[RMDB]
RNA sequence: GGGAACGACUCGAGUAGAGUCGAAAAUUGAAGGUAAAACAGCCUGUGGGUGAAACACACCCACAGGGCCCCUUGGGCGCUAGCACUCUGGUAUCACGGUACCUCUGUGCGCCUGUUUUACCGAAGGUGCGCCCUUCCUUCGGGAAGGGCAAAAGAAACAACAACAACAAC
Reactivity to DMS in 0.01 (KOAc 150mM, MgCl2 10mM, bicine 150mM(pH8.5), 24C), signal-to-noise 3, nucleotides 027 to 129: u060u050g020a240a130g020g030u000a040a050a020a010c010a030g030c000c050u020g000u020g040g000g000u040g020a090a150a120c270a150c040a010c000c010c040a030c020a130g090g000g000c010c010c000c210u080u090g010g030g020c010g030c040u060a010g050c020a010c010u020c090u020g010g040u000a000u010c030a170c300g110g000u000a080c030c000u020c110u020g020u000g010c030g020c020c030u000g030u000u010u000u000a000c000c040g020a070a090g030g000u030g010c170
Reactivity to 2A3 in 0.01 (KOAc 150mM, MgCl2 10mM, bicine 150mM(pH8.5), 24C), signal-to-noise 2, nucleotides 027 to 129: u110u090g070a060a030g000g000u010a000a000a000a000c000a000g010c000c000u000g000u000g020g000g010u000g060a040a170a000c170a010c000a000c040c000c010a000c000a000g010g000g020c000c030c000c000u180u280g000g010g010c020g000c030u080a040g000c000a000c010u050c010u000g000g000u000a000u010c020a060c200g140g010u000a010c000c000u000c040u010g000u000g000c020g010c000c000u000g000u000u020u020u000a020c000c000g000a010a000g010g010u050g030c050
This 170-nucleotide RNA was probed chemically with DMS and 2A3. For DMS the reverse transcriptase was MarathonRT. For DMS, 8,504 sequencing reads were counted.